RNA sequence: GGGAACGACUCGAGUAGAGUCGAAAAUCCUAAGUCGGAGCCUCUAGAAGCGCAGAUAAUGUUUCGAGUCGCUCGGAAACGAGCGACUAAGACAGAACAUUGUAGCUUCUAACGUGAGGCUCCGAUAUGGAAAAACUAGCGGCUUCGGCCGCUAGAACAUAAAUACGAUGUUCGCAUCGUAUUUAUGAAAAGAAACAACAACAACAAC
Reactivity to 2A3 in 0.01 (KOAc 150mM, MgCl2 10mM, bicine 150mM(pH8.5), 24C), signal-to-noise 2, nucleotides 027 to 156: u040c010c000u040a100a010g030u000c000g000g020a000g010c010c000u040c000u020a010g010a000a010g000c020g000c050a000g020a190u160a080a030u060g040u040u090u080c070g020a010g000u000c020g000c020u010c030g020g000a110a100a040c020g020a000g010c040g000a010c000u000a000a010g030a000c010a020g040a050a020c040a060u010u070g000u030a070g000c010u040u040c000u020a050a040c050g130u060g030a050g000g000c040u000c000c000g000a000u000a000u000g000g010a000a050a000a000a120c010u010a010g030c010g050g000c030u090u050c300g130g020c010c020g010c010u000a000g000a010a000
Reactivity to DMS in 0.01 (KOAc 150mM, MgCl2 10mM, bicine 150mM(pH8.5), 24C), signal-to-noise 2, nucleotides 027 to 156: u000c000c000u000a070a280g010u000c010g010g010a040g010c000c020u000c020u010a020g020a070a020g020c000g000c140a150g020a130u000a040a100u000g020u000u000u000c150g010a030g040u000c000g030c010u000c020g000g000a210a120a270c030g000a020g040c030g010a000c000u000a040a070g000a130c180a080g000a030a060c040a030u000u000g010u000a210g020c000u000u000c000u000a050a120c150g020u000g040a010g020g020c020u000c010c000g000a010u010a010u010g020g000a080a100a150a180a210c000u000a010g040c000g010g010c000u010u020c300g020g020c000c000g000c010u000a000g000a070a210
Structure probing data (2A3 and DMS) for a 207-nucleotide construct. Reactivities are given for positions 27 through 156. Conditions: 150 mM KOAc, 10 mM MgCl2 and 150 mM bicine (pH 8.5), 24 C. The 2A3 profile rests on 1,657 reads. For DMS, 4,397 sequencing reads were counted.